[RMDB]
RNA sequence: GGGAACGACUCGAGUAGAGUCGAAAAGAUAUGGAUCGCGUAAGAGCUGAUGACCCAUAUUUAAACCCUAUGGUCGGAAACGACCAUAGGGUGUGCGUAUGGCAAGGCUCUUGAUCGAUCCUAAGUCCUCUAAGAAUGCCUUCGGGCAUUCUUAGAGAAAAGAAACAACAACAACAAC
Reactivity to DMS in 0.01 (KOAc 150mM, MgCl2 10mM, bicine 150mM(pH8.5), 24C), signal-to-noise 1, nucleotides 027 to 126: g010a070u000a220u010g000g000a000u000c000g030c300g000u000a060a000g000a030g050c000u010g010a080u030g000a080c300c000c000a000u000a000u000u000u030a170a170a020c000c000c000u000a000u000g020g000u000c010g000g020a130a040a160c020g030a000c010c000a100u000a000g000g000g020u000g000u000g030c300g010u010a000u010g000g010c020a070a120g000g030c000u000c000u000u000g020a030u000c000g000a030u000c000c000u000a010a140g010u010c020